[RMDB]
RNA sequence: GGGAACGACUCGAGUAGAGUCGAAAAAGGCGCACCGCGGUGGUAUCACCAAUGACCUGAUUGACGUCCAGCGUGCCGCGGCGGAACCAGGCGCUGCCAAUACUGGCGGAGGCGUCAAUGCCGGAAAACUAAUUACCCCUUUCGAGGGGUAAUUAGUAAAAGAAACAACAACAACAAC
Reactivity to 2A3 in 0.01 (KOAc 150mM, MgCl2 10mM, bicine 150mM(pH8.5), 24C), signal-to-noise 4, nucleotides 027 to 126: a000g020g000c010g010c010a000c020c000g000c030g040g010u060g000g030u080a080u190c040a030c090c030a050a080u150g110a140c010c000u040g070a100u030u080g060a050c020g050u060c030c070a040g010c040g080u070g060c010c050g000c020g040g000c010g020g030a020a030c030c020a030g020g020c020g000c020u020g010c010c000a120a060u140a140c060u050g050g000c040g040g040a080g070g000c000g020u030c010a010a040u060g030c010c000g020g000a060a090a000
Reactivity to DMS in 0.01 (KOAc 150mM, MgCl2 10mM, bicine 150mM(pH8.5), 24C), signal-to-noise 5, nucleotides 027 to 126: a090g000g010c020g030c030a080c020c020g000c040g000g030u010g000g000u010a050u010c060a150c300c090a050a090u000g000a100c070c040u000g000a090u010u000g010a100c050g000u010c010c080a120g000c070g020u000g020c050c040g010c040g010g020c030g000g010a080a120c070c090a100g010g000c010g020c030u000g010c060c060a090a150u010a090c120u010g000g010c010g000g000a150g000g000c010g010u000c030a030a050u000g020c020c020g000g010a110a050a090
Chemical mapping of a 177-nucleotide RNA with 2A3 and DMS. Reactivities are given for positions 27 through 126. The 2A3 profile rests on 5,190 reads. For DMS, 5,951 sequencing reads were counted. The RNA was probed in 150 mM KOAc, 10 mM MgCl2 and 150 mM bicine (pH 8.5) at 24 C. High DMS reactivity at an A or C suggests that its Watson-Crick edge is free.